The record gives the reactivity of an RNA of 177 nucleotides to DMS and 2A3. 2A3 adducts were read by reverse transcription with SuperScript II with manganese. The DMS profile rests on 1,596 reads. In probing experiments dimethyl sulfate is read out at A N1 and C N3, which are open when not base-paired.

[RMDB]
RNA sequence: GGGAACGACUCGAGUAGAGUCGAAAACUACAUAGUUUCGACUAUGUAGAAACCAUUAGGAAGCAUGCAGAUGCAUAUGGACGACGGCAACUAACCUAUUGCGAACAGCAGGUUUCGACCUGCUGAACCCUAGAAAUCCUUUCGAGGAUUUCUAGGGAAAAGAAACAACAACAACAAC
Reactivity to DMS in 0.01 (KOAc 150mM, MgCl2 10mM, bicine 150mM(pH8.5), 24C), signal-to-noise 2, nucleotides 027 to 126: c000u000a000c000a010u000a010g000u000u000u010c170g030a030c030u010a010u000g010u000a000g000a080a140a140c010c020a060u010u020a070g020g000a090a070g000c040a000u000g020c100a060g020a040u000g010c070a100u000a070u000g000g000a110c070g020a080c120g000g000c020a060a040c060u030a090a060c040c040u000a090u000u010g010c120g010a080a150c010a000g000c000a010g000g000u000u000u010c200g010a030c000c000u010g000c000u000g000a020a070
Reactivity to 2A3 in 0.01 (KOAc 150mM, MgCl2 10mM, bicine 150mM(pH8.5), 24C), signal-to-noise 2, nucleotides 027 to 126: c000u000a000c010a030u000a010g010u020u060u070c160g060a000c010u000a000u000g000u000a000g000a000a010a020c030c010a030u030u170a060g070g050a090a030g030c030a010u080g030c060a050g050a200u080g030c020a020u070a080u220g090g020a050c060g000a010c060g100g030c020a050a030c030u060a040a070c030c010u040a140u050u170g050c090g070a120a040c030a020g000c000a010g000g000u020u040u110c180g060a000c000c000u000g000c000u010g010a000a000